[RMDB]
RNA sequence: GGGAACGACUCGAGUAGAGUCGAAAAACACACUAACCACAAGUUUGACACCGAACACGUUAGCUACUCAAACUGUGACCCGCUACCGUCUGUCGUAUCCGGGCAGCCCGUCACGUUGCGCCCGUUCUCUUGAAGUUCUUUUCGAAGAACUUCAAGAAAAAGAAACAACAACAACAAC
Reactivity to 2A3 in 0.01 (KOAc 150mM, MgCl2 10mM, bicine 150mM(pH8.5), 24C), signal-to-noise 4, nucleotides 027 to 126: a000c050a000c000a010c020u080a050a030c030c010a030c040a140a030g020u050u050u060g080a050c040a040c070c070g040a090a010c040a020c110g050u090u090a030g000c030u060a050c020u020c080a070a090a080c050u070g020u040g060a040c020c000c000g000c020u030a050c010c010g040u070c050u070g100u090c060g040u070a090u040c040c010g000g050g010c020a010g020c020c020c000g040u060c030a030c070g060u070u080g020c030g030c020c010c010g050u110u000c030
Reactivity to DMS in 0.01 (KOAc 150mM, MgCl2 10mM, bicine 150mM(pH8.5), 24C), signal-to-noise 6, nucleotides 027 to 126: a090c090a080c140a120c080u010a060a100c070c040a070c130a080a090g000u000u000u000g010a080c110a080c110c040g020a060a070c100a070c120g010u010u000a050g010c030u000a050c080u000c060a060a040a050c100u010g010u000g000a080c030c020c080g010c030u000a040c030c020g000u000c050u010g020u000c060g020u010a060u010c060c040g000g000g000c060a050g020c030c040c050g010u010c070a040c080g010u000u010g010c110g000c030c020c020g010u010u000c070

This 177-nucleotide RNA was probed chemically with 2A3 and DMS. For 2A3, 6,290 sequencing reads were counted. For DMS, 8,574 sequencing reads were counted.